Structure probing data (DMS and 2A3) for a 177-nucleotide construct. For DMS, 26,856 sequencing reads were counted. DMS adducts were read by reverse transcription with MarathonRT. The 2A3 profile rests on 8,451 reads.

RNA sequence: GGGAACGACUCGAGUAGAGUCGAAAAUUAGAUGUUGAUGGUUUACGUGGUGAUAUUGUAACAAACCGUGCAGCAAAAGCGCAUGCAGCAUACAAUGGUCGAGAUAAAGUAACAAUUAAUGAUAUCGAUACUAACACUUUUUCGAAAGUGUUAGUAUAAAAGAAACAACAACAACAAC
Reactivity to DMS in 0.01 (KOAc 150mM, MgCl2 10mM, bicine 150mM(pH8.5), 24C), signal-to-noise 9, nucleotides 027 to 126: u010u010a100g020a080u000g020u000u000g010a070u010g010g010u000u010u010a060c090g030u000g010g020u000g010a070u010a060u000u000g020u000a070a070c110a060a090a090c190c070g020u000g000c020a070g020c070a060a060a100a110g010c080g010c030a040u000g010c050a050g010c080a060u000a040c150a030a040u000g010g010u000c030g010a090g000a080u010a040a060a100g010u010a040a060c090a050a060u010u000a040a080u000g000a100u000a060u000c080g000
Reactivity to 2A3 in 0.01 (KOAc 150mM, MgCl2 10mM, bicine 150mM(pH8.5), 24C), signal-to-noise 6, nucleotides 027 to 126: u120u030a030g020a060u050g030u080u050g030a070u050g000g100u040u070u080a040c050g030u040g030g010u030g040a030u060a030u130u160g040u070a110a040c020a070a080a010c040c020g010u040g000c040a070g000c010a040a100a150a070g030c040g000c020a010u070g000c010a010g000c010a010u030a060c030a030a050u030g080g000u030c020g030a010g010a200u100a100a140a030g060u040a060a030c030a080a040u130u210a120a100u130g060a020u030a030u150c060g030